An RNA of 177 nucleotides, treated with DMS and 2A3 and read out base by base. For DMS, 124,559 sequencing reads were counted. For 2A3, 58,580 sequencing reads were counted. The RNA was probed in 150 mM KOAc, 10 mM MgCl2 and 150 mM bicine (pH 8.5) at 24 C.
RNA sequence: GGGAACGACUCGAGUAGAGUCGAAAACAGCGUCAUGAGAAAGGGGGACAUUGGGUGCUGACCAGGUUGGCUUAGCAGCUGACAUGGUGUUCCCCGAUUUUGGUGUUAGUGUAUUGAGCUAACCUGGGUCGAUUGCGUCCUUCGGGAUGUAAUUGACAAAAGAAACAACAACAACAAC
Reactivity to DMS in 0.01 (KOAc 150mM, MgCl2 10mM, bicine 150mM(pH8.5), 24C), signal-to-noise 9, nucleotides 027 to 126: c050a060g000c040g010u010c030a080u030g000a110g010a050a090a140g010g010g000g000g000a070c070a080u020u020g010g010g010u010g010c010u000g000a190c000c000a020g000g010u000u000g000g000c010u000u000a080g010c190a100g000c000u000g010a030c030a030u010g000g010u030g010u000u000c010c000c000c010g000a020u010u010u020u020g010g020u010g010u000u000a020g010u000g000u020a150u040u020g000a080g000c010u000a010a010c010c010u000g010g010
Reactivity to 2A3 in 0.01 (KOAc 150mM, MgCl2 10mM, bicine 150mM(pH8.5), 24C), signal-to-noise 9, nucleotides 027 to 126: c010a000g010c010g030u030c020a050u080g060a020g070a090a050a030g010g000g000g000g010a010c000a030u020u060g060g010g010u030g000c010u010g010a020c000c000a000g000g000u000u010g000g000c000u020u050a020g010c010a000g010c010u000g010a010c000a030u050g040g000u030g000u010u000c000c000c000c000g010a020u000u010u020u110g040g000u020g000u000u010a010g000u000g020u020a120u030u130g030a000g000c000u000a000a000c000c000u010g020g000